[RMDB]
Structure probing data (DMS and 2A3) for a 177-nucleotide construct. For DMS, 1,493 sequencing reads were counted. 2A3 adducts were read by reverse transcription with SuperScript II with manganese. Reactivities are given for positions 27 through 126.
RNA sequence: GGGAACGACUCGAGUAGAGUCGAAAAAGGAGCCACGAUGACGACGGCCGUGACCGGUGAACACCACGCGAGUGUGCAGCGGAUACAACUCAGAAUCAGCGGGAUGUCGUGCUCUGCGUGCGCCCACGCGCACGAUGCUCUUCGGAGCAUCGUGCGCAAAAGAAACAACAACAACAAC
Reactivity to DMS in 0.01 (KOAc 150mM, MgCl2 10mM, bicine 150mM(pH8.5), 24C), signal-to-noise 2, nucleotides 027 to 126: a070g020g000a160g000c040c040a040c060g000a080u020g000a040c010g010a100c040g020g010c030c010g000u000g000a070c010c010g030g020u000g020a050a030c040a040c030c030a160c160g020c230g000a050g050u000g000u020g010c010a070g030c040g000g010a170u020a060c140a070a090c080u020c130a100g010a120a060u070c140a100g010c020g030g050g000a180u000g000u000c030g010u000g000c040u000c050u000g000c040g010u000g000c080g000c020c010c020a120c120
Reactivity to 2A3 in 0.01 (KOAc 150mM, MgCl2 10mM, bicine 150mM(pH8.5), 24C), signal-to-noise 3, nucleotides 027 to 126: a000g100g000a060g060c050c010a040c060g040a050u090g030a000c040g020a010c010g010g050c010c010g040u020g000a050c010c010g000g120u000g000a060a010c010a010c010c030a080c170g240c070g080a150g150u000g000u010g010c010a050g090c020g040g010a030u060a160c100a110a040c130u150c150a060g150a140a120u090c040a030g060c010g020g070g060a170u060g010u010c020g010u030g080c000u010c010u110g070c020g010u060g010c040g040c000c000c000a010c060